[RMDB]
Overview:
The record gives the reactivity of an RNA of 207 nucleotides to 2A3 and DMS. For DMS the reverse transcriptase was MarathonRT. Conditions: 150 mM KOAc, 10 mM MgCl2 and 150 mM bicine (pH 8.5), 24 C. For 2A3, 4,908 sequencing reads were counted. Reactivities are given for positions 27 through 156. For 2A3 the reverse transcriptase was SuperScript II with manganese. The DMS profile rests on 3,112 reads.
RNA sequence: GGGAACGACUCGAGUAGAGUCGAAAACGAUCUGUUCGCAGAUCGAGCUACGGAGACGUAGCAAAGGCAGCGAGGAGCUGGACGCUGCCCCUACCGGAAAUGUAAGCAUAUCCACGUGUGCUAGGAUAUGCCCAGCUCCAGAGAAACAGCACACGAAUACUCACUCAAUAUUCGUAUUGAGUGAGUAAAAAGAAACAACAACAACAAC
Reactivity to 2A3 in 0.01 (KOAc 150mM, MgCl2 10mM, bicine 150mM(pH8.5), 24C), signal-to-noise 3, nucleotides 027 to 156: c010g000a000u000c020u010g040u070u050c220g000c060a000g000a010u000c000g000a040g010c000u000a000c000g000g020a050g020a040c000g000u000a000g000c000a030a030a000g000g000c000a000g000c000g010a020g000g010a000g000c000u010g010g010a030c020g000c000u000g000c000c000c000c000u020a020c000c020g080g050a040a020a010u160g020u180a130a000g000c000a000u000a000u000c010c010a030c050g000u000g000u000g010c000u020a010g000g000a010u000a000u010g000c000c000c000a000g000c000u000c000c000a030g070a000g040a010a110a010c040a010g000c000a000c000a000c010g020a020a020
Reactivity to DMS in 0.01 (KOAc 150mM, MgCl2 10mM, bicine 150mM(pH8.5), 24C), signal-to-noise 2, nucleotides 027 to 156: c050g010a020u000c000u000g030u000u000c300g060c000a000g020a010u000c000g030a110g020c000u000a020c000g000g020a300g000a270c010g040u000a000g000c030a040a020a030g000g000c000a020g030c020g030a180g000g000a030g040c030u000g000g000a140c050g020c000u000g000c010c000c040c070u000a160c050c020g010g010a130a110a150u000g010u000a220a110g000c010a090u010a020u010c010c020a100c060g000u000g010u000g010c000u020a130g000g000a030u000a020u010g000c000c010c030a080g010c030u000c010c080a120g010a180g000a110a100a070c090a010g040c000a020c000a010c000g010a150a160